This 177-nucleotide RNA was probed chemically with 2A3 and DMS. The 2A3 profile rests on 17,418 reads. For DMS the reverse transcriptase was MarathonRT. The reactions ran in a buffer of 150 mM KOAc, 10 mM MgCl2 and 150 mM bicine (pH 8.5), at 24 C. Values cover nucleotides 27 to 126. The data come from the RNA Mapping Database (RMDB), library TTRDES.
RNA sequence: GGGAACGACUCGAGUAGAGUCGAAAAGAUAUGGACAGUGCGGCCCGAACGACGAUCGCAGGCCUCGGAAACGAGGCUGCGGGAGUUCCCACUGUCCUAAGUCAAACACCAUGGUUCGCCAUGGUGACUAUUCUACCCUGUUCGCAGGGUAGAAUAGAAAAGAAACAACAACAACAAC
Reactivity to 2A3 in 0.01 (KOAc 150mM, MgCl2 10mM, bicine 150mM(pH8.5), 24C), signal-to-noise 3, nucleotides 027 to 126: g000a010u020a000u050g000g010a000c000a000g010u030g160c300g150g050c180c180c190g040a040a000c020g300a070c020g000a010u000c020g000c040a040g110g210c010c000u000c000g000g000a000a000a000c000g000a000g020g000c010u000g000c000g000g000g000a020g000u070u080c000c030c000a000c010u010g000u000c000c000u000a000a000g010u000c020a030a080a120c010a000c010c000a010u010g000g070u070u120c300g030c140c000a000u000g000g000u010g010a000
Reactivity to DMS in 0.01 (KOAc 150mM, MgCl2 10mM, bicine 150mM(pH8.5), 24C), signal-to-noise 6, nucleotides 027 to 126: g000a010u000a040u000g000g000a020c000a010g010u000g010c290g040g030c300c150c150g010a030a030c040g000a070c240g010a060u010c010g010c000a040g010g010c010c000u000c000g000g000a010a020a030c000g010a010g000g010c000u000g000c000g000g000g000a060g010u000u000c020c030c010a020c010u010g000u000c000c000u000a000a050g000u000c010a160a160a280c020a010c000c000a010u000g000g010u000u010c270g010c000c000a010u000g000g010u000g000a080